[RMDB]
RNA sequence: GGGAACGACUCGAGUAGAGUCGAAAAAUUAGCGGUGGCGGAUUAGCUGAAAUCGUACCUUUGUUCUUCCAAGUGUCUACCACUAAGCCUAUCGAAGGUUUAAAACCUUACACUGCACUAGAAAUGGCUCACUUAAAGAAUUCGUUCUUUAAGUGAGAAAAGAAACAACAACAACAAC
Reactivity to 2A3 in 0.01 (KOAc 150mM, MgCl2 10mM, bicine 150mM(pH8.5), 24C), signal-to-noise 6, nucleotides 027 to 126: a000u090u070a020g010c020g050g010u020g020g040c080g030g040a050u070u050a030g010c040u040g030a030a040a050u100c050g020u050a070c010c000u050u050u070g070u070u040c040u080u000c030c010a050a030g040u020g020u120c030u040a030c000c020a020c020u020a040a010g040c000c000u030a040u110c080g060a050a010g040g000u010u060u140a080a150a010a020c010c010u010u050a030c050a020c070u080g020c030a050c100u090a060g090a110a140a080u120g100g000
Reactivity to DMS in 0.01 (KOAc 150mM, MgCl2 10mM, bicine 150mM(pH8.5), 24C), signal-to-noise 7, nucleotides 027 to 126: a100u010u000a070g020c040g020g030u000g010g010c080g020g020a090u000u000a090g010c040u000g000a050a080a060u010c110g010u010a080c070c040u000u010u000g010u000u010c070u000u000c040c050a070a080g010u000g010u000c050u000a060c040c040a050c060u000a060a070g010c020c030u000a100u010c120g010a040a040g000g010u000u000u010a060a070a080a090c010c020u000u000a120c100a080c090u000g000c050a060c100u000a080g010a050a080a090u000g010g010
This 177-nucleotide RNA was probed chemically with 2A3 and DMS. For DMS the reverse transcriptase was MarathonRT. It was measured as part of the RMDB library OK2TRN. The RNA was probed in 150 mM KOAc, 10 mM MgCl2 and 150 mM bicine (pH 8.5) at 24 C.